Notes
An RNA of 207 nucleotides, treated with DMS and 2A3 and read out base by base. Values cover nucleotides 27 to 156. For DMS the reverse transcriptase was MarathonRT.
RNA sequence: GGGAACGACUCGAGUAGAGUCGAAAAGGGGUCAUGCUUUUGACGUGACGCCCGUAGGCGAAGAACAUACACUGAAGCCUCCACGGUGUAUGGGAGCCUACGGCGUCACGAUAAGCAUGACGGAGGCACCCAAAAGCGAUAACUUCGGUUAUCGCAACUGAUAGCUUAUGUUCGCAUAAGCUAUCAGAAAAGAAACAACAACAACAAC
Reactivity to DMS in 0.01 (KOAc 150mM, MgCl2 10mM, bicine 150mM(pH8.5), 24C), signal-to-noise 2, nucleotides 027 to 156: g000g010g000g030u000c000a000u010g000c020u000u010u000u010g020a250c180g050u000g030a000c020g000c020c000c090g020u000a020g020g000c020g010a130a190g000a220a290c000a010u000a010c010a010c000u010g040a060a160g030c020c010u000c010c000a300c020g000g030u000g000u000a020u000g000g010g000a100g050c010c000u000a010c010g000g010c000g000u000c010a000c000g000a020u000a020a100g000c000a030u010g000a050c000g000g000a050g060g030c020a140c020c010c010a060a080a150a160g010c010g020a030u000a010a020c000u010u000c280g030g030u010u000a000u000c030g000c030a010a030
Reactivity to 2A3 in 0.01 (KOAc 150mM, MgCl2 10mM, bicine 150mM(pH8.5), 24C), signal-to-noise 5, nucleotides 027 to 156: g050g010g030g000u000c000a000u010g000c010u120u130u130u270g250a170c160g000u000g000a000c000g030c070c060c030g000u000a000g000g010c010g140a300a010g000a020a000c000a000u000a000c000a000c000u020g050a120a000g010c000c000u000c000c000a010c010g010g000u010g000u000a000u000g010g010g010a010g000c000c010u000a000c000g000g000c000g010u000c000a000c000g010a000u010a000a000g000c010a000u000g000a000c000g000g000a000g000g000c000a060c000c000c000a030a110a020a040g000c000g000a000u000a000a000c010u040u110c300g090g000u000u000a000u000c000g000c000a010a010

Annotation:
The reactions ran in a buffer of 150 mM KOAc, 10 mM MgCl2 and 150 mM bicine (pH 8.5), at 24 C. 2A3 adducts were read by reverse transcription with SuperScript II with manganese.